Overview
This 177-nucleotide RNA was probed chemically with 2A3 and DMS. For 2A3, 11,560 sequencing reads were counted. The data come from the RNA Mapping Database (RMDB), library TTRDES. For DMS, 10,176 sequencing reads were counted.
[RMDB]
RNA sequence: GGGAACGACUCGAGUAGAGUCGAAAAAGAUAUGGAUUGCUUCUCUAGCGUGACCAUCGAUCUAUUGCGAUGCUACUCGGAAACGAGUAGGGCAGCAAUAGGGAGGUUCGGGAGCAAUCCUAAGUCAUCUCGUAAUAGAGUUCGCUCUAUUACGAGAAAAAGAAACAACAACAACAAC
Reactivity to 2A3 in 0.01 (KOAc 150mM, MgCl2 10mM, bicine 150mM(pH8.5), 24C), signal-to-noise 4, nucleotides 027 to 126: a000g030a020u040a020u070g000g000a010u010u000g010c030u280u170c070u020c110u090a080g070c120g300u300g060a010c000c020a070u300c030g000a000u000c010u000a010u000u010g020c010g020a040u040g150c000u000a000c000u000c000g010g000a020a020a020c000g000a000g000u010a010g050g110g000c100a000g000c000a000a000u000a000g010g000g010a020g020g000u020u070c030g010g010g000a000g000c000a000a000u000c000c000u000a030a000g000u000c020a110
Reactivity to DMS in 0.01 (KOAc 150mM, MgCl2 10mM, bicine 150mM(pH8.5), 24C), signal-to-noise 7, nucleotides 027 to 126: a110g010a030u000a170u000g000g000a020u000u010g000c000u010u010c000u010c080u030a140g070c300g010u020g010a010c010c000a300u010c200g000a040u020c010u000a010u000u000g010c010g010a300u010g000c000u000a010c000u000c000g020g000a040a040a060c010g020a010g010u000a010g000g010g000c120a300g010c000a000a000u000a010g000g000g010a020g030g020u000u000c030g000g000g000a030g000c010a010a010u000c000c000u000a010a070g000u000c020a230